[RMDB]
RNA sequence: GGGAACGACUCGAGUAGAGUCGAAAAGACAUGUGACUAGGUACCGAUCCUAGACAUGAUCUCGCGCUCAGCUGUGUCUAGCCAUGCGCAUGGAUCCUAGCUAGGGUACAGCCAUGACGUACUACGAACCGGCACUAGACUUCGGUCUAGUGCCGGUAAAAGAAACAACAACAACAAC
Reactivity to 2A3 in 0.01 (KOAc 150mM, MgCl2 10mM, bicine 150mM(pH8.5), 24C), signal-to-noise 1, nucleotides 027 to 126: g040a000c010a010u020g010u040g170a120c020u020a010g000g040u160a260c010c180g070a110u010c010c030u010a010g020a010c000a000u000g100a250u010c050u020c050g000c000g000c020u040c040a050g000c030u040g030u030g000u140c040u030a010g000c000c050a080u170g000c030g020c030a010u100g150g000a090u010c010c050u010a030g020c020u010a050g010g040g000u100a020c010a000g000c020c020a090u110g030a030c000g040u040a030c070u030a040c080g090a060
Reactivity to DMS in 0.01 (KOAc 150mM, MgCl2 10mM, bicine 150mM(pH8.5), 24C), signal-to-noise 1, nucleotides 027 to 126: g000a130c000a000u020g020u010g010a210c000u000a010g010g000u000a300c180c130g020a090u030c060c010u000a040g000a090c040a020u020g010a070u000c000u010c170g020c110g000c020u000c230a140g000c040u000g000u010g020u000c070u010a070g000c100c020a190u020g010c110g020c020a080u020g030g020a120u030c010c040u000a060g020c100u000a080g000g000g020u000a010c040a010g000c110c010a160u000g000a120c070g050u040a150c090u010a080c090g000a130